[RMDB]
RNA sequence: GGGAACGACUCGAGUAGAGUCGAAAAUUGGCCUUGGCAGUCUCGACAGCAGCCAUCAGCUCGUCGAGGUGUGCGACCAGCUCAGCCCGCAGCUUGGUCUCGUUGUAGCCAGAACCCAGGGCCGCUUCUUCCAGCGGACGGAUCAGGUUCUCGAUGGCUAGUACUGAUUUUUCGAAAUCAGUACUAGAAAAGAAACAACAACAACAAC
Reactivity to DMS in 0.01 (KOAc 150mM, MgCl2 10mM, bicine 150mM(pH8.5), 24C), signal-to-noise 3, nucleotides 027 to 156: u010u010g010g010c070c070u000u030g010g040c030a210g000u010c000u010c010g010a040c020a050g000c020a230g000c010c040a060u010c030a150g000c010u000c080g050u000c000g000a030g020g000u000g020u000g020c010g020a030c000c000a040g010c010u000c070a100g010c010c010c010g010c170a100g030c040u000u000g050g000u000c020u000c090g010u000u000g020u010a140g030c000c050a140g010a050a040c030c010c030a200g030g020g000c010c010g010c020u000u000c060u000u010c130c130a110g000c010g020g010a060c020g000g000a120u000c070a110g020g000u000u000c020u000c040g010a080u000g010g000
Reactivity to 2A3 in 0.01 (KOAc 150mM, MgCl2 10mM, bicine 150mM(pH8.5), 24C), signal-to-noise 1, nucleotides 027 to 156: u130u070g060g030c030c040u020u070g050g030c020a020g020u010c010u020c010g020a000c010a000g010c000a020g060c020c040a030u020c010a020g000c010u070c110g000u000c000g030a020g000g000u060g100u050g040c000g010a010c000c020a000g000c000u000c030a030g070c010c030c020g030c030a010g030c000u160u240g010g020u020c020u010c070g060u050u080g080u090a030g030c040c010a020g050a010a000c000c010c020a020g070g140g030c000c000g040c000u050u150c000u140u040c090c050a000g020c010g010g050a010c040g010g010a090u180c100a040g030g020u090u030c090u050c070g020a030u040g010g000